[RMDB]
RNA sequence: GGGAACGACUCGAGUAGAGUCGAAAAUUUACGGUAUUCGUACCGUAAACGAGCAAGCAAGCAGCGCAACGAGACAAGAGGAUAAUAAGAUCGAGCAUGCUGAUAGUAGGAUCUUCGGAUCCUACAAGUGGUAUCCUAAGUUCGCUUAGGAUACCACAAAAGAAACAACAACAACAAC
Reactivity to 2A3 in 0.01 (KOAc 150mM, MgCl2 10mM, bicine 150mM(pH8.5), 24C), signal-to-noise 3, nucleotides 027 to 126: u000u010u010a010c010g000g000u020a010u010u080c190g040u020a050c000c000g010u000a000a000a000c040g020a040g080c040a070a000g000c000a070a000g000c020a020g000c020g010c040a060a110c030g010a010g060a080c040a050a080g050a050g210g040a090u100a140a040u090a230a000g050a090u070c030g000a020g030c030a020u050g000c020u050g040a090u070a130g000u010a000g010g000a000u000c000u030u020c200g070g000a010u000c010c000u000a000c000a000a030
Reactivity to DMS in 0.01 (KOAc 150mM, MgCl2 10mM, bicine 150mM(pH8.5), 24C), signal-to-noise 3, nucleotides 027 to 126: u000u020u000a000c030g010g010u000a020u010u020c230g030u000a010c000c000g010u000a000a020a050c080g000a100g030c140a070a100g000c070a070a080g010c040a030g000c050g020c020a050a050c020g000a090g010a030c130a060a060g000a130g010g020a100u000a040a060u010a100a060g010a060u010c050g020a130g000c050a060u000g000c070u000g000a110u010a070g000u000a000g000g020a030u000c000u000u000c190g010g000a010u010c000c000u000a000c010a020a050